[RMDB]
RNA sequence: GGGAACGACUCGAGUAGAGUCGAAAAUUUGCUGUGGUAGGGCCUCCCUGUGUCUGGAGGGCAUAGCUGAUACUUGCUGGGACACAGCUUUGGUCAGCCCCACAAGAGGUGCCCAACAAGAGGGGCACACGAGUCUGCUAUUCGUAGCAGACUCGUGAAAAGAAACAACAACAACAAC
Reactivity to DMS in 0.01 (KOAc 150mM, MgCl2 10mM, bicine 150mM(pH8.5), 24C), signal-to-noise 4, nucleotides 027 to 126: u010u020u010g020c080u010g020u000g010g000u020a110g010g010g000c020c010u000c040c130c050u000g010u000g010u010c080u000g010g010a100g020g000g020c060a030u010a070g020c030u000g000a080u000a100c060u000u010g000c010u000g010g020g000a120c150a120c010a010g000c010u000u000u000g000g020u000c020a070g010c050c180c000c020a030c060a100a050g010a100g000g020u000g000c000c010c010a120a090c180a050a120g020a160g010g000g010g000c020a040
Reactivity to 2A3 in 0.01 (KOAc 150mM, MgCl2 10mM, bicine 150mM(pH8.5), 24C), signal-to-noise 2, nucleotides 027 to 126: u060u050u160g030c040u050g000u060g020g020u110a170g040g070g080c000c010u050c020c010c010u120g060u100g010u100c080u100g050g080a080g060g020g000c020a030u090a000g000c020u060g040a040u100a300c030u050u040g000c020u070g020g030g110a030c060a000c000a200g020c110u080u050u030g030g000u050c000a020g020c000c020c000c000a010c010a000a040g010a020g000g050u020g000c000c000c000a030a040c030a080a000g100a040g050g000g040g040c010a000